[RMDB]
RNA sequence: GGGAACGACUCGAGUAGAGUCGAAAAAGGUUCCCUCAGAACGGUCGGCAAUCGUUCGAAGAGUGUAAUGGCAUAAGGGAGCUUGACUGUGAGACAUACAAGUCGAUCAGGUACGAAAGUAGAGCAUACUGUAAGUCGAGUUCGCUCGACUUACAGUAAAAGAAACAACAACAACAAC
Reactivity to DMS in 0.01 (KOAc 150mM, MgCl2 10mM, bicine 150mM(pH8.5), 24C), signal-to-noise 3, nucleotides 027 to 126: a060g030g000u000u000c000c000c020u000c160a210g000a070a060c000g020g000u000c120g050g030c120a130a100u010c030g030u010u010c050g000a120a030g020a060g070u020g040u000a070a070u020g000g010c020a070u000a150a100g000g000g010a090g010c030u000u010g000a150c030u010g000u000g000a300g020a010c050a090u040a090c300a030a140g010u000c030g020a110u000c020a010g000g010u000a020c090g000a080a010a150g010u000a090g000a140g000c040a200u000
Reactivity to 2A3 in 0.01 (KOAc 150mM, MgCl2 10mM, bicine 150mM(pH8.5), 24C), signal-to-noise 2, nucleotides 027 to 126: a000g100g050u010u000c010c000c050u000c040a050g000a020a020c000g000g060u030c000g120g030c050a100a100u040c010g040u030u000c030g000a160a000g000a020g050u060g010u150a160a180u130g120g000c040a040u040a080a140g070g000g010a030g000c000u020u060g050a050c000u000g030u040g050a020g000a040c000a000u180a120c180a280a060g000u010c030g020a040u000c020a010g030g030u080a070c090g100a050a040a000g020u040a040g010a000g020c000a010u000
Annotation: An RNA of 177 nucleotides, treated with DMS and 2A3 and read out base by base. It was measured as part of the RMDB libraries RFM100 and RFMREP. The RNA was probed in 150 mM KOAc, 10 mM MgCl2 and 150 mM bicine (pH 8.5) at 24 C.